[RMDB]
RNA sequence: GGGAACGACUCGAGUAGAGUCGAAAAUGGUGACCAAAUUGCUCAAAGUCCUGCGAUUGGUUCAGCUGGACAACGACAACUGCAUACAACAAUUGAUAGUUGAUAAGAACAAACUGCAGCAGCACAAAUAUAAUUACGCGUUCGCGCGUAAUUAUAUAAAAGAAACAACAACAACAAC
Reactivity to DMS in 0.01 (KOAc 150mM, MgCl2 10mM, bicine 150mM(pH8.5), 24C), signal-to-noise 4, nucleotides 027 to 126: u000g040g030u000g010a120c020c030a070a130a110u000u000g000c040u010c050a070a180a150g000u000c020c020u010g020c040g000a090u010u010g030g000u010u010c070a140g030c060u000g010g010a060c040a070a120c140g000a110c050a020a060c030u000g010c060a060u010a060c100a060a050c060a080a070u000u010g000a120u010a090g010u000u020g020a100u000a090a110g000a070a060c080a070a050a060c130u000g010c030a020g000c060a020g000c050a060c120a060a080
Reactivity to 2A3 in 0.01 (KOAc 150mM, MgCl2 10mM, bicine 150mM(pH8.5), 24C), signal-to-noise 3, nucleotides 027 to 126: u100g020g020u050g030a040c030c030a010a060a100u110u060g010c000u010c060a070a050a040g040u040c010c010u020g030c000g080a110u030u150g140g000u140u100c070a030g000c020u030g030g020a020c020a050a010c050g040a010c020a040a020c020u010g010c000a020u070a120c040a090a020c010a070a140u140u140g080a130u140a100g030u010u030g030a090u110a130a050g050a070a020c030a080a100a020c040u040g000c020a020g000c000a000g030c010a030c020a070a110
The record gives the reactivity of an RNA of 177 nucleotides to DMS and 2A3.
2A3 adducts were read by reverse transcription with SuperScript II with manganese.
The RNA was probed in 150 mM KOAc, 10 mM MgCl2 and 150 mM bicine (pH 8.5) at 24 C.
For DMS, 2,534 sequencing reads were counted.
DMS adducts were read by reverse transcription with MarathonRT.